Background: Chemical mapping of a 177-nucleotide RNA with DMS and 2A3. The reactions ran in a buffer of 150 mM KOAc, 10 mM MgCl2 and 150 mM bicine (pH 8.5), at 24 C. It was measured as part of the RMDB library OK1LIB. Reactivities are rounded to 0.1 and cut off at 0 and 3.
RNA sequence: GGGAACGACUCGAGUAGAGUCGAAAAUCUCCAGGUGGAUGCCUCGUGGUGCUACGAAUGCCUACAACUGGAAUCUGUUGUAGAAGCCUACUGUAUGUCUCUUGACAUACAGUAGAUACCUCCAAGGGAGAGGUGAUGACUUCGGUCAUCAUCUUUCAAAAGAAACAACAACAACAAC
Reactivity to DMS in 0.01 (KOAc 150mM, MgCl2 10mM, bicine 150mM(pH8.5), 24C), signal-to-noise 9, nucleotides 027 to 126: u020c040u010c000c040a080g000g010u010g000g000a070u010g000c020c060u000c050g020u000g000g020u020g010c060u020a090c080g010a080a080u010g000c040c010u000a040c010a010a020c020u000g000g010a090a140u030c080u010g010u010u000g000u000a020g010a100a130g010c140c000u000a010c000u000g010u000a000u000g000u000c000u030c260u030u040g000a010c000a000u000a000c000a000g000u000a000g000a070u010a030c060c020u000c030c040a120a120g010g010
Reactivity to 2A3 in 0.01 (KOAc 150mM, MgCl2 10mM, bicine 150mM(pH8.5), 24C), signal-to-noise 9, nucleotides 027 to 126: u020c020u000c010c010a030g010g050u050g030g040a060u090g020c000c010u070c040g060u100g040g060u090g040c030u050a040c060g100a120a050u150g040c000c000u000a010c000a020a000c010u030g040g070a070a100u110c080u070g010u000u010g000u010a010g020a110a010g030c000c000u000a000c000u000g000u000a000u000g000u000c010u020c050u170u300g000a000c000a000u000a000c000a000g000u000a000g000a000u010a010c000c010u030c010c020a070a070g120g060